[RMDB]
RNA sequence: GGGAACGACUCGAGUAGAGUCGAAAACAUAAUGUCGCUCGUAAAGGUGACAUUUAACGGAGCGCAAGCCAAGAGCGGGGCUACCAUAGCUGGUUACUACGCUGAAAUCGUUGGUGCUAACAACUCUGUUUCAACUAACGGCGGGGUGUUCCGUGAGCCCGUGUCCUUUUUUCGAAAAGGACACGGGAAAAGAAACAACAACAACAAC
Reactivity to 2A3 in 0.01 (KOAc 150mM, MgCl2 10mM, bicine 150mM(pH8.5), 24C), signal-to-noise 1, nucleotides 027 to 156: c030a070u130a010a000u050g000u000c000g020c050u090c170g300u290a110a120a080g000g050u010g010a000c000a010u010u050u080a070a010c000g010g010a020g030c000g000c110a050a030g080c000c040a050a000g070a000g050c020g020g030g070g020c050u040a010c030c000a100u080a060g100c110u070g030g000u020u050a020c000u010a000c020g000c020u080g040a060a050a040u060c020g020u010u000g000g000u040g050c110u040a030a040c020a070a090c150u100c080u180g110u040u040u100c070a080a100c050u060a050a000c020g000g000c070g000g010g010g010u030g000u000u000c000c000g000u010g030a060g020
Background:
An RNA of 207 nucleotides, treated with 2A3 and read out base by base. For 2A3 the reverse transcriptase was SuperScript II with manganese. As a SHAPE reagent, 2A3 marks flexible, mostly unpaired nucleotides at the ribose 2'-OH. The data come from the RNA Mapping Database (RMDB), library OK3TST.